[RMDB]
RNA sequence: GGGAACGACUCGAGUAGAGUCGAAAAUCUGAUCCUGAGUAUUCAUCAGAGGAGGAUGAUGCUGCCGUCACAUACUGGUGGGAGCAAGUAAAAGAGGACAACUACAAAGAUGGAAUACCUCAAUUUGUGAUACAGGCGGAUUCGUCCGCCUGUAUCAAAAAGAAACAACAACAACAAC
Reactivity to DMS in 0.01 (KOAc 150mM, MgCl2 10mM, bicine 150mM(pH8.5), 24C), signal-to-noise 2, nucleotides 027 to 126: u000c040u000g000a200u000c070c000u040g000a080g020u050a130u000u010c120a070u010c000a020g000a300g010g000a250g000g010a020u040g030a200u000g040c010u010g030c000c000g000u020c000a030c170a130u010a060c250u010g010g000u000g000g010g010a000g020c000a070a100g000u000a020a020a080a150g010a020g000g000a100c150a060a040c020u010a130c070a020a170a120g020a140u010g000g000a070a080u000a040c020c000u000c060a130a170u000u010u020g000
Reactivity to 2A3 in 0.01 (KOAc 150mM, MgCl2 10mM, bicine 150mM(pH8.5), 24C), signal-to-noise 1, nucleotides 027 to 126: u000c020u020g040a000u050c000c000u000g020a010g000u060a140u210u130c050a100u000c010a050g010a030g020g020a010g040g020a010u030g010a030u030g040c000u040g080c020c000g060u030c030a030c050a140u270a300c150u060g000g060u030g000g010g000a000g010c000a010a010g070u120a040a090a130a030g110a010g030g000a060c060a000a030c090u020a030c040a120a200a000g040a240u100g040g040a020a080u090a190c010c080u020c040a020a130u110u100u230g060
Source information: This 177-nucleotide RNA was probed chemically with DMS and 2A3. For DMS, 998 sequencing reads were counted. DMS adducts were read by reverse transcription with MarathonRT. Conditions: 150 mM KOAc, 10 mM MgCl2 and 150 mM bicine (pH 8.5), 24 C. Source: RMDB library OK2TRN, as collected in RNAgym.